[RMDB]
RNA sequence: GGGAACGACUCGAGUAGAGUCGAAAAUUUCCCACGCGGAUUUCCGAUAAACAAGGGGAAAUUGCGAAGUUACUAAAUUUGCCUGAUAACGCACACACGCAGCAAUGGCGUAAGACGUAAUGCGAAAAAAUAUUUAUUCAUUCGUGAAUAAAUAUUUAAAAGAAACAACAACAACAAC
Reactivity to DMS in 0.01 (KOAc 150mM, MgCl2 10mM, bicine 150mM(pH8.5), 24C), signal-to-noise 9, nucleotides 027 to 126: u030u020u000c000c000c010a280c060g000c010g000g010a040u000u000u000c010c000g010a150u030a080a110a160c300a120a120g020g010g000g000a010a010a010u000u010g000c010g010a130a100g020u010u010a080c120u020a050a110a110u010u010u010g010c050c040u010g010a140u020a090a120c050g020c030a050c120a100c200a050c020g010c030a130g000c070a130a100u040g000g000c020g010u000a030a040g010a160c050g020u010a070a070u010g000c050g010a000a020a070
Reactivity to 2A3 in 0.01 (KOAc 150mM, MgCl2 10mM, bicine 150mM(pH8.5), 24C), signal-to-noise 9, nucleotides 027 to 126: u010u010u000c000c010c000a000c000g020c000g080g010a000u000u010u000c000c010g020a020u190a110a250a040c120a140a140g160g060g000g010a010a020a010u010u010g010c010g020a080a030g060u090u100a070c070u120a090a120a220u110u110u130g070c030c040u070g050a100u070a180a020c030g000c010a020c010a010c000a000c070g010c010a030g000c030a090a300u170g170g000c000g010u020a000a020g060a010c020g010u030a060a030u070g020c030g080a090a020a000
Notes: Chemical mapping of a 177-nucleotide RNA with DMS and 2A3. Conditions: 150 mM KOAc, 10 mM MgCl2 and 150 mM bicine (pH 8.5), 24 C. DMS adducts were read by reverse transcription with MarathonRT. Reactivities are rounded to 0.1 and cut off at 0 and 3.